Source: RMDB library OK2TST, as collected in RNAgym. Chemical mapping of a 177-nucleotide RNA with 2A3 and DMS. Values are in units of 0.01, from 0 to 300, in steps of 10. For 2A3, 1,153 sequencing reads were counted. DMS adducts were read by reverse transcription with MarathonRT.
RNA sequence: GGGAACGACUCGAGUAGAGUCGAAAAACAGCGUUCAACAUGCUGUUGGAUCGUAUCGUCAACAAACGUGAAGAACCGCAGUCUAUUGAAGUGCAUCCGCGCUUGAUUGAACGCCGCUCCGUGGCUAACUGCUGCUAUGCUUCGGCAUAGCAGCAGUAAAAGAAACAACAACAACAAC
Reactivity to 2A3 in 0.01 (KOAc 150mM, MgCl2 10mM, bicine 150mM(pH8.5), 24C), signal-to-noise 1, nucleotides 027 to 126: a020c010a000g000c020g000u040u010c020a010a020c000a070u040g030c050u060g020u170u280g000g000a020u000c030g010u130a050u090c040g000u000c010a040a050c010a000a100a030c030g020u050g050a170a090g070a200a040c020c020g000c040a000g030u030c070u090a080u060u130g080a050a010g010u000g000c000a040u140c110c040g000c000g050c020u070u110g060a190u090u020g000a050a000c000g000c000c000g050c010u000c010c020g050u120g100g000c020u050a090
Reactivity to DMS in 0.01 (KOAc 150mM, MgCl2 10mM, bicine 150mM(pH8.5), 24C), signal-to-noise 1, nucleotides 027 to 126: a140c100a060g000c010g000u000u010c070a020a060c040a120u010g000c020u000g010u030u010g060g000a050u010c170g000u000a160u000c010g020u000c010a070a060c230a050a060a020c000g020u000g030a090a230g010a020a070c140c060g000c010a030g010u000c110u000a070u000u040g000a050a110g000u000g000c010a060u000c090c090g010c000g030c000u000u000g000a160u000u000g000a000a000c050g010c010c070g020c050u000c000c020g020u010g000g010c110u000a140